Source: RMDB library OK2TRN, as collected in RNAgym. This 177-nucleotide RNA was probed chemically with 2A3 and DMS. The reactions ran in a buffer of 150 mM KOAc, 10 mM MgCl2 and 150 mM bicine (pH 8.5), at 24 C. Values cover nucleotides 27 to 126.
RNA sequence: GGGAACGACUCGAGUAGAGUCGAAAACUCUGGGCUCCAUCCACUGAGGCGGUUGGCCCGUGCUGACCCACAGGUCAUGGAGUCUCAGGCCUCAGGCCCUCAGUCCAGAAGGGGAGAUGAGUCCGGCCUCUAAAUAUUUCUUCGGAAAUAUUUAGAGAAAAGAAACAACAACAACAAC
Reactivity to 2A3 in 0.01 (KOAc 150mM, MgCl2 10mM, bicine 150mM(pH8.5), 24C), signal-to-noise 3, nucleotides 027 to 126: c020u020c040u020g010g010g000c010u090c090c020a040u040c020c020a050c060u010g010a020g050g060c040g100g070u090u110g020g010c030c010c030g000u100g000c010u050g030a080c000c030c030a070c040a090g040g030u110c010a010u050g050g090a150g060u030c010u010c040a010g000g050c010c010u070c040a080g060g060c010c010c000u030c020a090g120u050c100c050a080g080a240a060g060g050g030g030a070g000a040u030g010a000g010u000c020c000g050g080c050
Reactivity to DMS in 0.01 (KOAc 150mM, MgCl2 10mM, bicine 150mM(pH8.5), 24C), signal-to-noise 5, nucleotides 027 to 126: c090u000c010u000g020g010g010c010u000c060c090a090u000c080c160a210c020u010g000a050g030g010c040g010g000u000u000g020g000c010c040c060g020u010g010c070u000g010a090c130c150c060a090c090a070g000g000u000c100a020u010g000g000a120g010u010c030u000c060a050g010g010c040c010u000c070a060g020g010c030c010c010u000c040a120g000u000c090c110a120g000a140a070g010g000g000g010a080g000a100u000g000a040g010u000c010c020g000g020c300